[RMDB]
Overview:
An RNA of 177 nucleotides, treated with DMS and 2A3 and read out base by base. For 2A3 the reverse transcriptase was SuperScript II with manganese. The data come from the RNA Mapping Database (RMDB), library OK2TRN. For 2A3, 3,457 sequencing reads were counted. The reactions ran in a buffer of 150 mM KOAc, 10 mM MgCl2 and 150 mM bicine (pH 8.5), at 24 C.
RNA sequence: GGGAACGACUCGAGUAGAGUCGAAAAGACGGCCCGUUGCCGGUCAGCAGCACCACUCCGACGUCGGGCGACAUUCGUGCAUGGUCGAGCACCCGGUACAGCUCGUCGACGGUGUGCGGGCGAAAUGCACUGGUCGUAAGUUCGCUUACGACCAGUGAAAAGAAACAACAACAACAAC
Reactivity to DMS in 0.01 (KOAc 150mM, MgCl2 10mM, bicine 150mM(pH8.5), 24C), signal-to-noise 4, nucleotides 027 to 126: g010a130c110g000g000c020c060c100g020u010u010g010c030c030g000g000u000c080a110g000c100a130g010c030a120c180c030a100c010u000c010c000g000a100c040g010u000c010g000g010g000c010g000a100c120a060u020u010c110g020u000g010c020a060u010g000g030u020c070g000a150g010c030a070c030c030c040g010g020u000a070c090a190g020c060u000c030g010u000c020g020a090c040g010g010u010g010u000g000c080g000g010g040c030g000a050a070a060u010g000
Reactivity to 2A3 in 0.01 (KOAc 150mM, MgCl2 10mM, bicine 150mM(pH8.5), 24C), signal-to-noise 2, nucleotides 027 to 126: g080a020c060g050g020c000c040c090g100u050u160g060c060c040g050g080u060c040a060g000c020a000g000c020a030c030c000a010c020u030c010c000g050a050c010g010u030c010g020g000g020c010g030a040c040a170u140u140c080g000u010g030c030a040u090g030g030u060c000g020a000g020c060a040c000c020c000g020g010u120a080c030a030g000c000u000c010g010u000c020g010a010c000g000g030u010g030u020g030c060g000g000g000c040g050a090a020a050u120g000